[RMDB]
An RNA of 207 nucleotides, treated with 2A3 and DMS and read out base by base. Reactivities are given for positions 27 through 156. It was measured as part of the RMDB library OK3TST. For DMS, 2,131 sequencing reads were counted. The 2A3 profile rests on 1,129 reads. For 2A3 the reverse transcriptase was SuperScript II with manganese.

RNA sequence: GGGAACGACUCGAGUAGAGUCGAAAAUUGGCAUCAGUCUCUGUAUUAGCUGUUUUGAUAGUUGCCUUAUGCUUUGGAUACAGAAUGUUGACAGGUAAAAAUUACCAUUUUUUGUCCUAUUGUUUAUUAAACAUGCAAUUUAAUCAAUUUAUUUGCACUGAUGACGAUUAUUCGUAAUCGUCAUCAGAAAAGAAACAACAACAACAAC
Reactivity to 2A3 in 0.01 (KOAc 150mM, MgCl2 10mM, bicine 150mM(pH8.5), 24C), signal-to-noise 3, nucleotides 027 to 156: u050u040g010g010c020a000u020c030a050g120u010c060u000c000u060g070u040a070u030u080a110g050c040u060g090u120u160u120u180g150a130u090a130g040u100u080g050c030c000u060u090a110u130g000c030u040u070u130g030g040a020u080a080c020a010g080a060a150u050g040u080u060g080a040c040a060g070g000u040a010a120a040a080a120u170u080a050c010c010a050u040u050u010u040u140u090g050u020c010c000u020a070u020u070g050u030u060u020a170u050u180a120a090a020c040a010u070g010c000a020a040u080u110u140a040a080u140c030a010a060u040u110u130a140u070u050u050g000c010a030
Reactivity to DMS in 0.01 (KOAc 150mM, MgCl2 10mM, bicine 150mM(pH8.5), 24C), signal-to-noise 1, nucleotides 027 to 156: u010u030g030g040c020a070u000c050a080g010u020c000u010c060u030g040u000a060u000u000a090g040c030u000g030u010u000u020u010g010a130u000a130g030u010u000g030c050c060u010u010a070u000g010c060u000u000u000g060g020a140u000a090c050a030g010a090a100u000g000u000u000g010a150c060a070g090g020u000a010a110a070a020a110u000u000a090c010c030a050u010u000u000u000u000u000g000u000c020c070u000a050u000u000g000u000u000u000a070u050u000a070a020a070c040a150u000g010c020a020a010u000u010u020a030a110u010c090a100a130u000u000u000a090u010u000u000g000c020a240